[RMDB]
RNA sequence: GGGAACGACUCGAGUAGAGUCGAAAACGAGCUUCACCCAUCUCUGUUGUCCGGCGGCGCGAAACGUCCUGUUACUCCAGAGAAGCCAGGAGCUAUUGGUCCACGGAAGAAGCCUGUUGAGCCGGAACACCAUCCCAUCGUUCGCGAUGGGAUGGUGAAAAGAAACAACAACAACAAC
Reactivity to DMS in 0.01 (KOAc 150mM, MgCl2 10mM, bicine 150mM(pH8.5), 24C), signal-to-noise 1, nucleotides 027 to 126: c040g020a130g000c050u000u000c020a230c050c040c030a140u000c040u000c030u000g020u000u000g000u000c260c090g000g000c080g020g000c000g010c030g020a180a090a180c070g020u000c000c030u000g010u010u000a100c010u000c070c010a040g000a070g010a140a110g000c040c020a140g000g000a060g020c040u000a070u000u000g000g010u000c020c090a070c090g000g000a090a050g000a050a090g000c010c000u000g010u000u010g010a070g020c020c050g030g000a090a210